[RMDB]
RNA sequence: GGGAACGACUCGAGUAGAGUCGAAAAGUCUACAGCGGCACGACGCUGAAGCGCACCUAUGCCGGCCUCACAUCCAGUAACUGGUCCUAUCCGCUGGCCGAAGACGUCGCUGACGGCCCGCUCCAGGACGUGCGCCUAGUCCUGCGCAGCGUCCGCGCGACCUGCCUUUAUUCGUAAAGGCAGGUCGAAAAGAAACAACAACAACAAC
Reactivity to 2A3 in 0.01 (KOAc 150mM, MgCl2 10mM, bicine 150mM(pH8.5), 24C), signal-to-noise 1, nucleotides 027 to 156: g060u070c060u100a170c040a080g000c010g120g000c020a010c080g150a070c030g000c060u050g060a050a020g040c050g060c020a050c070c030u100a060u110g080c070c060g000g060c020c020u060c020a080c010a160u120c010c000a050g070u200a090a100c050u090g000g000u050c060c010u140a170u080c020c070g000c030u040g010g020c000c000g000a040a000g020a000c150g020u020c010g040c030u040g000a020c020g030g000c000c000c000g080c010u040c030c080a000g000g030a030c000g000u000g000c010g020c020c000u080a090g040u070c050c000u100g000c040g030c030a090g100c000g000u040c070c000g010c020g000
Record summary: This 207-nucleotide RNA was probed chemically with 2A3. The 2A3 profile rests on 617 reads. The reactions ran in a buffer of 150 mM KOAc, 10 mM MgCl2 and 150 mM bicine (pH 8.5), at 24 C.